[RMDB]
RNA sequence: GGGAACGACUCGAGUAGAGUCGAAAAGUAAUAGAUAGGGGGAUGACGAGAAAGGGUGCGCUGAUAUCCCUCACGAAUGCUAGCAGUAAAUAGAAUAGCGCUCCUAAUACAACUAGCAACAAAAGGAUAAGGUAUCGUGAUGUCAAUCACAUUGCGAUAAUGAUUUAGCAUUCGUGCUAAAUCAUUAAAAAGAAACAACAACAACAAC
Reactivity to 2A3 in 0.01 (KOAc 150mM, MgCl2 10mM, bicine 150mM(pH8.5), 24C), signal-to-noise 6, nucleotides 027 to 156: g010u020a020a100u090a130g120a060u140a070g010g000g010g000g000a010u040g040a030c080g010a040g090a120a050a040g040g000g010u030g000c020g000c010u020g030a020u010a020u120c000c020c000u010c010a030c040g080a110a020u070g000c010u040a000g000c050a030g050u140a040a120a140u100a080g070a050a060u040a040g010c010g000c020u020c000c010u040a090a020u080a030c020a050a020c010u030a010g000c020a010a050c020a070a130a040a000g090g010a050u110a120a060g070g040u070a010u040c010g010u010g010a000u010g030u060c090a070a070u070c000a050c000a020u010u030g010c000g000a000
Reactivity to DMS in 0.01 (KOAc 150mM, MgCl2 10mM, bicine 150mM(pH8.5), 24C), signal-to-noise 4, nucleotides 027 to 156: g030u000a070a110u000a080g030a130u010a100g010g010g020g020g050a090u000g000a180c110g000a170g000a100a110a090g010g000g050u000g030c040g030c030u010g000a150u000a090u000c020c010c010u000c030a090c120g010a080a120u000g000c000u000a010g010c040a170g000u010a050a110a150u000a110g000a080a140u000a060g010c030g020c020u000c020c010u010a080a130u000a070c030a080a040c010u000a030g020c010a040a210c100a050a080a070a080g000g010a110u000a090a130g000g020u000a030u000c010g020u000g000a000u000g000u000c020a110a150u000c170a080c000a020u000u000g000c010g020a010